[RMDB]
RNA sequence: GGGAACGACUCGAGUAGAGUCGAAAAGAACCAAUUAGGCUGCUUGAUGCGGCCAAUUGCUGACAGAAAAGCUACCUUAGGGAUAACAGAGUCGUCACCCGCAAGAGCACAUAUCGACCGGGUGGCUCUGCACAUAGAGGUUCGCCUCUAUGUGCAGAAAAGAAACAACAACAACAAC
Reactivity to 2A3 in 0.01 (KOAc 150mM, MgCl2 10mM, bicine 150mM(pH8.5), 24C), signal-to-noise 3, nucleotides 027 to 126: g060a060a020c000c020a000a000u040u020a190g000g000c030u040g010c010u030u200g120a100u300g080c000g010g000c000c000a000a000u000u000g000c070u040g060a020c020a070g130a060a110a010a010g010c020u060a070c000c010u060u100a100g000g000g000a010u040a260a060c090a030g090a080g120u080c040g020u070c040a040c050c010c000g010c020a010a000g050a010g010c110a020c020a250u220a020u100c020g040a010c030c000g010g000g010u000g000g000c000u010
Reactivity to DMS in 0.01 (KOAc 150mM, MgCl2 10mM, bicine 150mM(pH8.5), 24C), signal-to-noise 2, nucleotides 027 to 126: g060a270a070c150c000a100a020u000u020a110g010g000c000u000g060c000u000u040g000a040u040g000c060g000g040c000c000a080a000u000u000g000c070u000g000a110c060a000g000a150a020a050a090g000c060u020a040c020c000u000u000a120g000g000g000a080u010a120a120c170a040g000a000g000u000c140g000u000c030a030c000c000c000g000c030a000a300g020a090g020c190a070c100a200u030a050u000c030g000a300c300c020g000g120g050u000g000g010c000u000
An RNA of 177 nucleotides, treated with 2A3 and DMS and read out base by base. DMS (dimethyl sulfate) methylates the pairing face of unpaired adenines and cytosines. Source: RMDB library RFM100, as collected in RNAgym. DMS adducts were read by reverse transcription with MarathonRT. Values are in units of 0.01, from 0 to 300, in steps of 10. 2A3 is a SHAPE reagent: it acylates the 2'-hydroxyl of flexible nucleotides of all four kinds.